The record gives the reactivity of an RNA of 207 nucleotides to DMS and 2A3.
RNA sequence: GGGAACGACUCGAGUAGAGUCGAAAAGUUAUUGGCUUAUAUUUGCACUACAUAAACUUGGAAGCCAAUUUCAUAGAAAAUGCCUAGAAACAAGCUUCAGUCUGCUACAAGGCCUGCUAAAGCACCCUAGUUCUGCUUAAGGCAUUUUAGGGGAAAAGGAUUACCAGUCAUUCGUGACUGGUAAUCCAAAAGAAACAACAACAACAAC
Reactivity to DMS in 0.01 (KOAc 150mM, MgCl2 10mM, bicine 150mM(pH8.5), 24C), signal-to-noise 1, nucleotides 027 to 156: g010u000u000a020u000u000g000g030c030u000u000a130u000a100u030u000u020g090c050a300c030u000a090c050a160u000a070a020a120c120u000u010g000g000a070a090g080c000c030a010a100u000u010u030c040a090u020a180g000a040a090a070a030u000g030c010c010u000a100g030a120a070a050c020a040a110g000c010u000u020c040a020g060u000c030u000g000c050u000a120c180a090a190g010g000c070c010u030g000c060u010a050a110a020g040c000a020c070c090c080u000a070g010u000u000c040u020g030c010u010u010a140a080g030g020c030a000u000u000u000u000a060g000g020g020g000a040a020a130a190
Reactivity to 2A3 in 0.01 (KOAc 150mM, MgCl2 10mM, bicine 150mM(pH8.5), 24C), signal-to-noise 2, nucleotides 027 to 156: g000u000u020a010u000u000g000g000c000u040u020a080u050a140u270u190u300g090c120a090c070u120a050c160a170u230a120a180a070c080u160u040g120g060a000a010g000c000c000a000a000u000u000u020c060a040u070a080g120a010a060a010a000u030g040c000c020u010a030g150a000a140a030c030a090a030g000c000u020u050c010a020g050u020c020u030g010c030u100a080c070a110a060g040g000c000c010u020g000c020u100a090a010a010g000c000a050c000c000c020u050a040g040u080u060c030u050g000c010u120u110a100a070g000g000c000a000u010u030u060u040a030g000g000g020g030a020a170a000a030

The reactions ran in a buffer of 150 mM KOAc, 10 mM MgCl2 and 150 mM bicine (pH 8.5), at 24 C. 2A3 adducts were read by reverse transcription with SuperScript II with manganese. It was measured as part of the RMDB library OK3TST. The 2A3 profile rests on 938 reads.